Structure probing data (2A3 and DMS) for a 207-nucleotide construct. For 2A3, 804 sequencing reads were counted. Conditions: 150 mM KOAc, 10 mM MgCl2 and 150 mM bicine (pH 8.5), 24 C. For 2A3 the reverse transcriptase was SuperScript II with manganese. It was measured as part of the RMDB library OK3TST.

RNA sequence: GGGAACGACUCGAGUAGAGUCGAAAACGCGCUCAUGGCAGGGAUACACAGACAGCCCCCAAGGUUAUUCAACCCAGGCUUCCAGUUAAGCCACAGGAAUGUGCAGAGUAAAGUGCCUUGGCCGACCAGUGUGUGUGCCACAGCGAAGACGGCGACACGUCUCAUACAGAUUCGUCUGUAUGAGACGAAAAGAAACAACAACAACAAC
Reactivity to 2A3 in 0.01 (KOAc 150mM, MgCl2 10mM, bicine 150mM(pH8.5), 24C), signal-to-noise 2, nucleotides 027 to 156: c060g000c000g010c020u010c000a110u060g040g020c020a010g040g040g000a000u120a080c050a010c030a050g210a230c080a110g000c010c000c020c000c070a030a050g060g000u130u110a100u200u090c020a000a100c010c000c000a000g050g000c000u050u000c050c010a020g050u110u130a000a000g010c030c000a020c080a050g050g030a020a060u150g030u080g110c050a010g030a060g080u190a050a100a030g030u030g020c000c000u000u000g000g020c010c010g080a110c030c020a090g000u010g000u030g010u000g010u000g100c000c010a060c070a030g040c000g040a010a040g020a070c050g000g040c030g020a000c020a000
Reactivity to DMS in 0.01 (KOAc 150mM, MgCl2 10mM, bicine 150mM(pH8.5), 24C), signal-to-noise 2, nucleotides 027 to 156: c080g020c030g000c010u000c040a140u000g000g070c080a080g020g000g050a130u000a050c080a070c060a050g000a130c070a090g020c000c000c030c000c000a040a050g020g000u000u000a050u000u000c080a080a230c020c010c030a270g010g070c040u000u000c010c020a300g030u000u010a010a020g010c040c020a130c060a030g010g030a130a110u010g090u000g000c050a140g020a100g080u000a020a120a110g000u000g010c000c000u000u010g010g010c000c010g000a070c010c020a160g030u020g020u010g000u000g040u000g020c080c010a030c020a150g020c050g000a020a060g000a110c060g060g000c020g010a070c060a120